RNA sequence: GGGAACGACUCGAGUAGAGUCGAAAACUGUGUCCCAGGAUCCAGACAAAAGGAGACAUUGUGGUUCUCUGGGCAGAGGGAGCAGAGCACCGGCAGAGCAUGACGUCUGUGGUGUGGGAAGGACAUGCUUCCUUCCACAGGGAAGCAGAAGGCAGGACGGUUUUACUGAGUUCGCUCAGUAAAACCGAAAAGAAACAACAACAACAAC
Reactivity to 2A3 in 0.01 (KOAc 150mM, MgCl2 10mM, bicine 150mM(pH8.5), 24C), signal-to-noise 2, nucleotides 027 to 156: c050u030g040u060g010u250c000c000c010a000g000g030a050u000c030c000a030g120a130c060a120a130a040a060g070g010a150g070a070c100a150u190u060g030u110g090g040u070u020c110u000c000u010g000g040g000c010a000g030a010g050g020g010a010g000c020a010g000a020g010c060a020c000c030g110g030c010a000g010a030g060c120a150u200g060a120c080g150u040c000u000g060u010g000g050u000g030u100g000g010g030a050a010g020g000a020c030a090u240g020c090u050u060c000c010u000u030c000c030a050c000a000g010g000g010a010a000g000c000a020g000a030a010g010g000c030a000g000g070a010